[RMDB]
RNA sequence: GGGAACGACUCGAGUAGAGUCGAAAAUGAUUUCACAAAGUUGGGGUGUCAAAGAUGAUUAAAUGUGUCUGUUUAGUUGAAGAAACAGCUGAUAAAAUAUUGCUUGUUCAAGUAAGGAAUCGCGAAAAGUGAGAGAGCGAUUCGUCGCUCUCUCACUAAAAGAAACAACAACAACAAC
Reactivity to 2A3 in 0.01 (KOAc 150mM, MgCl2 10mM, bicine 150mM(pH8.5), 24C), signal-to-noise 1, nucleotides 027 to 126: u190g000a000u000u000u000c000a020c000a030a110a000g210u110u010g010g000g000g100u000g000u000c000a040a000a080g120a080u300g090a000u000u300a140a190a000u300g020u000g120u150c040u040g140u020u000u020a040g060u100u140g050a080a020g170a100a210a000c000a160g000c000u100g090a040u000a060a000a000a000u150a190u040u130g000c000u020u000g000u070u100c010a270a000g000u020a000a000g140g000a040a040u000c000g000c040g300a040a000a110
Reactivity to DMS in 0.01 (KOAc 150mM, MgCl2 10mM, bicine 150mM(pH8.5), 24C), signal-to-noise 2, nucleotides 027 to 126: u010g010a050u010u060u000c040a110c000a070a080a130g020u030u000g000g010g000g020u000g000u000c040a040a060a090g000a060u000g010a120u020u020a040a110a050u030g040u000g010u030c090u010g000u000u010u020a070g000u000u040g010a080a130g010a040a020a070c050a030g000c050u030g020a060u030a080a040a100a050u020a080u010u020g000c040u010u000g030u000u050c070a080a050g010u010a040a010g000g000a070a050u020c070g000c050g010a060a110a090
An RNA of 177 nucleotides, treated with 2A3 and DMS and read out base by base. The DMS profile rests on 2,785 reads. 2A3 adducts were read by reverse transcription with SuperScript II with manganese. Conditions: 150 mM KOAc, 10 mM MgCl2 and 150 mM bicine (pH 8.5), 24 C.